[RMDB]
RNA sequence: GGGAACGACUCGAGUAGAGUCGAAAAUUGCGCCUCCGAUUCGCCGUCGGCAUUUCCCCAGCAACCAUGACCUACCAGGCUGCGGUGCGGCUCGCCGCACAGGUCAUCCCUCAUCGGGCGCGUCCUGGAUAGGGCUAUACUUUCGAGUAUAGCCCAACUACACAUCCAGAUUCGUCUGGAUGUGUAGAAAAGAAACAACAACAACAAC
Reactivity to DMS in 0.01 (KOAc 150mM, MgCl2 10mM, bicine 150mM(pH8.5), 24C), signal-to-noise 2, nucleotides 027 to 156: u000u000g030c030g020c020c000u000c010c040g030a140u000u000c040g050c040c050g030u000c060g010g100c040a160u000u000u000c000c000c010c060a180g000c050a040a070c050c020a120u010g010a040c010c020u010a130c090c020a080g020g040c040u000g030c050g030g080u000g030c070g030g000c070u020c150g030c030c010g000c010a040c040a060g000g040u010c020a100u000c020c010c000u000c090a130u000c080g010g030g000c060g030c020g010u000c020c040u020g030g010a190u000a110g020g020g040c000u000a010u000a000c010u000u010u000c200g000a060g030u000a020u000a010g000c010c000c000a000a010
Reactivity to 2A3 in 0.01 (KOAc 150mM, MgCl2 10mM, bicine 150mM(pH8.5), 24C), signal-to-noise 5, nucleotides 027 to 156: u120u090g010c030g020c020c010u010c020c030g050a100u110u080c090g010c070c030g050u040c020g020g000c040a040u040u030u040c010c000c010c010a030g030c030a040a050c070c020a050u080g040a030c010c010u070a100c040c010a000g020g000c030u040g000c020g000g000u030g000c060g020g000c080u080c090g070c010c000g000c010a020c010a020g020g030u060c020a050u060c000c010c000u120c050a210u170c090g010g000g000c020g010c010g020u050c000c000u020g010g030a070u110a130g020g000g000c000u010a000u000a000c000u030u070u160c250g090a010g000u000a000u000a000g000c010c000c000a000a000